[RMDB]
RNA sequence: GGGAACGACUCGAGUAGAGUCGAAAACGCCAGGUUCGCCUGGCGAAAAAACCUUUGUGUACUGGGCGUGUUGUCAGCCUGAGGCCCAUUGGGUGUAGGGCUUGGAUUUACACGGCGGAAAGUACACUCUGGUAAAAAAGCACUGUUCGCAGUGCAACAUUGUUAGUGAGUUCGCUCACUAACAAUGAAAAGAAACAACAACAACAAC
Reactivity to 2A3 in 0.01 (KOAc 150mM, MgCl2 10mM, bicine 150mM(pH8.5), 24C), signal-to-noise 4, nucleotides 027 to 156: c010g000c000c010a010g030g040u060u070c200g110c120c020u040g000g020c020g000a000a000a000a000a000a000c000c010u010u000u010g000u000g000u000a010c010u030g130g140g030c020g000u000g010u000u000g010u010c000a010g000c020c000u020g020a100g150g000c030c010c090a270u200u300g010g000g000u300g010u060a010g010g000g000c000u010u110g020g000a000u110u220u090a010c000a000c010g060g060c010g050g140a250a150a020g000u000a000c000a000c000u000c000u000g010g000u120a110a050a010a010a020a020g020c000a010c000u000g010u080u140c240g000c150a000g000u000g000c000a000a010
Reactivity to DMS in 0.01 (KOAc 150mM, MgCl2 10mM, bicine 150mM(pH8.5), 24C), signal-to-noise 1, nucleotides 027 to 156: c020g040c010c010a010g030g010u000u020c270g030c010c000u000g000g030c000g010a000a020a050a100a010a020c000c000u000u000u010g020u010g000u000a000c020u000g010g010g010c030g050u000g010u000u000g010u010c010a140g050c010c000u000g010a280g000g010c010c010c020a300u010u000g000g010g020u000g020u000a300g000g000g000c000u000u000g010g010a070u000u030u000a050c010a010c000g030g000c040g010g000a050a040a030g030u000a030c020a010c010u010c050u000g000g130u000a010a060a090a100a100a110g010c010a020c000u010g000u000u000c210g050c030a020g010u010g020c000a030a090
An RNA of 207 nucleotides, treated with 2A3 and DMS and read out base by base. The RNA was probed in 150 mM KOAc, 10 mM MgCl2 and 150 mM bicine (pH 8.5) at 24 C. It was measured as part of the RMDB library RNAMAK. DMS adducts were read by reverse transcription with MarathonRT. The 2A3 profile rests on 3,814 reads.